[RMDB]
RNA sequence: GGGAACGACUCGAGUAGAGUCGAAAAGAUAUGGACAUAGUGAGCAACAGCCAUACGUCGGAAACGACGUGAUGGACAUGCUCCUAUGUCCUAAGUCAAAAUCGUCAUCGCUUCGGCGAUGACGAAACGAACUCCUCCAGUUCGCUGGAGGAGUUCGAAAAGAAACAACAACAACAAC
Reactivity to 2A3 in 0.01 (KOAc 150mM, MgCl2 10mM, bicine 150mM(pH8.5), 24C), signal-to-noise 1, nucleotides 027 to 126: g000a010u020a020u030g000g020a000c020a010u090a060g250u300g300a030g000c090a140a300c260a300g000c030c000a010u000a030c010g030u020c000g000g030a010a010a000c010g020a000c000g020u110g130a080u020g000g000a060c010a110u300g000c000u000c020c000u000a000u010g000u000c000c000u000a010a000g010u000c000a000a050a000a300u060c000g000u000c000a000u000c010g010c000u180u000c300g230g000c000g000a000u000g010a000c010g000a000a010a010